[RMDB]
RNA sequence: GGGAACGACUCGAGUAGAGUCGAAAAGAUAUGGAAACCUUUUGUGCACCGUGUGGUUCAACAGCGACACGCAUCGGAAACGAUGUGUCGACAUGAACUAUACGGUGCACAAAAGGUUUCCUAAGUCGAUGUAAGAAUAGUUCGCUAUUCUUACAUCAAAAGAAACAACAACAACAAC
Reactivity to DMS in 0.01 (KOAc 150mM, MgCl2 10mM, bicine 150mM(pH8.5), 24C), signal-to-noise 6, nucleotides 027 to 126: g000a110u010a300u010g000g010a000a010a000c000c000u000u000u000u000g010u000g000c020a020c010c000g040u000g040u000g010g000u010u000c000a030a110c300a230g010c020g010a080c100a050c130g020c200a040u000c000g010g000a140a110a220c010g020a020u010g010u000g010u000c000g000a070c100a220u010g000a010a010c000u000a010u000a010c000g000g000u000g000c000a000c000a000a000a000a020g000g010u000u000u000c000c000u000a010a100g010u010c130
Structure probing data (DMS) for a 177-nucleotide construct.
The RNA was probed in 150 mM KOAc, 10 mM MgCl2 and 150 mM bicine (pH 8.5) at 24 C.
Values cover nucleotides 27 to 126.
Source: RMDB library TTRINS, as collected in RNAgym.